[RMDB]
RNA sequence: GGGAACGACUCGAGUAGAGUCGAAAAAAUCCAUCCUUGGCUCCUCCACUAAUUAUAAGCCUAGUAAGUUAGCGAAGCUUGGAUGAGGUUCGCAACUCACGUACGAAAUACGGAAUCUCCGUCGGUCUCACUUUCACAGAUUCGUCUGUGAAAGUGAAAAAGAAACAACAACAACAAC
Reactivity to 2A3 in 0.01 (KOAc 150mM, MgCl2 10mM, bicine 150mM(pH8.5), 24C), signal-to-noise 5, nucleotides 027 to 126: a000a000u050c020c000a030u000c000c000u000u020g060g000c020u020c030c000u030c020c010a030c040u020a000a040u110u060a140u050a210a060g020c010c020u010a030g050u050a060a040g020u020u080a040g020c030g030a030a000g040c000u100u090g100g060a130u280g100a100g000g070u030u000c010g000c040a020a030c010u010c020a060c020g030u100a020c100g120a030a040a100u120a040c030g030g070a050a070u050c020u000c020c010g020u020c010g030g060u010c010
Reactivity to DMS in 0.01 (KOAc 150mM, MgCl2 10mM, bicine 150mM(pH8.5), 24C), signal-to-noise 3, nucleotides 027 to 126: a060a050u030c090c020a080u010c050c040u000u030g010g010c030u000c060c000u000c020c050a080c110u010a060a020u050u020a060u040a090a120g000c080c030u030a110g000u030a070a060g000u010u010a120g060c030g010a020a040g010c010u000u040g000g020a070u050g010a030g020g010u010u000c000g000c050a090a000c030u020c090a060c010g030u020a060c100g030a070a060a190u020a060c060g000g010a130a110u020c050u020c000c000g010u010c030g000g000u010c100